[RMDB]
RNA sequence: GGGAACGACUCGAGUAGAGUCGAAAAGGCUCCGGCAAUGUCUGACUGGAGUGUCGAGCCACUGAUUAGCGACGUCUUGCAACCGAUCGUUCAUCGGUGGUAAGAUUUGUUGCAAUUCAGCUGCCUACCCGCUUUAUUCAUUCGUGAAUAAAGCGGGAAAAGAAACAACAACAACAAC
Reactivity to 2A3 in 0.01 (KOAc 150mM, MgCl2 10mM, bicine 150mM(pH8.5), 24C), signal-to-noise 1, nucleotides 027 to 126: g040g000c010u000c060c000g030g000c010a020a060u070g150u100c040u010g100a300c090u120g020g010a010g010u020g030u020c010g000a020g010c000c030a030c000u010g000a010u010u070a010g000c020g020a000c000g000u000c000u000u010g000c000a010a010c000c010g000a020u000c060g050u140u020c020a010u000c010g000g000u000g000g000u000a010a000g000a000u050u020u110g000u000u000g000c000a000a020u030u000c020a020g020c060u060g030c000c000u020a040
Reactivity to DMS in 0.01 (KOAc 150mM, MgCl2 10mM, bicine 150mM(pH8.5), 24C), signal-to-noise 2, nucleotides 027 to 126: g000g010c000u000c140c000g030g010c030a010a030u030g010u000c060u010g010a160c200u020g040g000a030g010u000g020u010c000g020a050g000c010c020a190c000u000g010a000u000u000a150g030c000g040a010c020g010u000c000u000u000g010c020a010a000c010c010g000a010u010c300g000u000u010c100a080u000c010g000g010u000g000g030u000a020a010g000a020u000u000u020g030u000u000g010c010a010a060u010u000c010a030g000c150u000g010c020c030u010a140